The data come from the RNA Mapping Database (RMDB), library RSTRND. Structure probing data (2A3) for a 207-nucleotide construct. The RNA was probed in 150 mM KOAc, 10 mM MgCl2 and 150 mM bicine (pH 8.5) at 24 C. For 2A3, 670 sequencing reads were counted.
RNA sequence: GGGAACGACUCGAGUAGAGUCGAAAAAUUUACUUUAGAACAAAUGCAAACAACAUCUUAAACUUUAAUUCAAAGUUAGCUAUCGCUUAAAAUUUUUGAAUUACCAAUGAAAUUGGUCACUUAUUUUAUUGGUUCGAUUUAUAGUGAAUGCUGUAUUGACGUAUAGUCUGUUCGCAGACUAUACGUCAAAAGAAACAACAACAACAAC
Reactivity to 2A3 in 0.01 (KOAc 150mM, MgCl2 10mM, bicine 150mM(pH8.5), 24C), signal-to-noise 1, nucleotides 027 to 156: a010u110u130u080a110c010u060u180u210a100g040a180a030c010a010a080a100u130g060c070a090a200a180c000a040a040c040a120u090c000u110u210a120a000a110c060u060u160u120a040a080u010u010c010a000a000a000g000u060u030a000g070c000u070a070u180c070g000c000u060u100a060a120a220a170u220u200u080u020u080g020a060a060u000u040a010c000c000a000a000u010g010a000a000a020u000u000g060g000u000c010a000c020u000u000a000u000u010u000u000a010u000u000g000g000u060u080c030g040a060u010u070u100a010u010a000g020u000g020a040a090u030g010c020u010g100u180a110u000u000